[RMDB]
RNA sequence: GGGAACGACUCGAGUAGAGUCGAAAAUCCCCCGCGAUUCUUCUUCGACUCGGCCCGGCUCAUUUCGGCAAAGGGCGGCGGUCCUUAGUUCUCUUACUCUUUUCUGUAAAGAGGAGACUGUAGGAUCCCCACUAUUAACGUUCGCGUUAAUAGUGGGAAAAGAAACAACAACAACAAC
Reactivity to DMS in 0.01 (KOAc 150mM, MgCl2 10mM, bicine 150mM(pH8.5), 24C), signal-to-noise 1, nucleotides 027 to 126: u010c000c010c000c030c110g000c050g000a060u020u010c010u010u010c070u000u000c010g000a040c050u010c030g000g030c010c000c020g030g000c090u030c090a160u000u010u000c120g020g030c040a030a120a130g010g040g010c070g000g000c090g020g000u000c010c010u010u000a040g000u030u000c000u040c000u000u000a300c030u000c020u000u000u000u010c250u040g010u020a030a010a010g000a000g000g000a020g000a040c030u000g010u010a010g010g000a070u000c010
Reactivity to 2A3 in 0.01 (KOAc 150mM, MgCl2 10mM, bicine 150mM(pH8.5), 24C), signal-to-noise 1, nucleotides 027 to 126: u010c010c000c010c010c020g100c000g010a040u070u000c010u040u030c020u090u130c030g030a020c030u030c040g020g050c050c000c010g070g000c020u030c030a090u040u180u150c080g030g000c020a030a050a080g030g000g000c020g020g010c020g010g000u030c000c020u030u010a010g030u190u050c010u000c010u000u150a070c000u080c010u080u080u090u050c100u150g200u120a030a020a010g000a000g010g000a000g000a000c030u080g060u080a000g000g020a000u010c000

Chemical mapping of a 177-nucleotide RNA with DMS and 2A3. The DMS profile rests on 851 reads. The RNA was probed in 150 mM KOAc, 10 mM MgCl2 and 150 mM bicine (pH 8.5) at 24 C. For 2A3, 754 sequencing reads were counted.